[RMDB]
RNA sequence: GGGAACGACUCGAGUAGAGUCGAAAAGAAACAGGAUCGACAAGGGUGUAAAGAUCGCUCUUUUACUCGGCAUGAUACCACCGUUAUCGGGUCAACAGCGUAGUUGCAAAUGACAACAAUGCUCAGGAAGGGGUAGCACCGUUCGCGGUGCUACCAAGACAUAUGCGUCCUUCGGGACGCAUAUGUCAAAAGAAACAACAACAACAAC
Reactivity to 2A3 in 0.01 (KOAc 150mM, MgCl2 10mM, bicine 150mM(pH8.5), 24C), signal-to-noise 3, nucleotides 027 to 156: g020a000a170a030c070a000g150g020a050u090c040g020a010c090a110a070g130g130g040u170g070u150a140a200a010g030a040u060c020g010c050u020c030u010u080u020u040a030c030u020c010g020g000c010a000u050g010a010u070a070c000c000a010c020c000g050u070u080a030u080c030g000g010g020u010c010a020a020c020a060g020c020g050u120a020g010u040u000g020c040a050a180a190u190g080a150c000a030a030c010a040a210u090g000c000u000c080a040g110g080a080a020g130g020g000g030u000a000g000c000a000c020c000g000u040u040c220g030c010g110g000u000g010c000u020a000c000c000a000a000